[RMDB]
RNA sequence: GGGAACGACUCGAGUAGAGUCGAAAAGAUAUGGAUGCGUGGAGCCUAGGGAAACUAUUCGGAAACGAACGAAUUUCCCUAGGCUAUGAAGCGCAUCCUAAGUCAAAGGGCGCCUUCGGGCGCCCAACAAUUCUAAUCCCUUCGGGGAUUAGAAUUGAAAAGAAACAACAACAACAAC
Reactivity to DMS in 0.01 (KOAc 150mM, MgCl2 10mM, bicine 150mM(pH8.5), 24C), signal-to-noise 2, nucleotides 027 to 126: g010a050u000a300u010g000g010a010u000g000c000g000u000g000g010a010g010c000c000u000a020g010g000g000a000a000a010c090u000a300u000u000c030g000g010a120a140a130c050g000a000a010c130g030a080a110u000u000u000c000c010c000u010a000g000g000c000u000a000u010g000a050a250g000c020g010c040a010u000c000c000u000a000a080g010u010c040a080a110a170g020g020g000c000g010c000c000u000u010c190g040g040g030c000g000c000c010c000a000a020
Structure probing data (DMS) for a 177-nucleotide construct. The reactions ran in a buffer of 150 mM KOAc, 10 mM MgCl2 and 150 mM bicine (pH 8.5), at 24 C. For DMS, 1,154 sequencing reads were counted. It was measured as part of the RMDB library TTRDEL. Values cover nucleotides 27 to 126.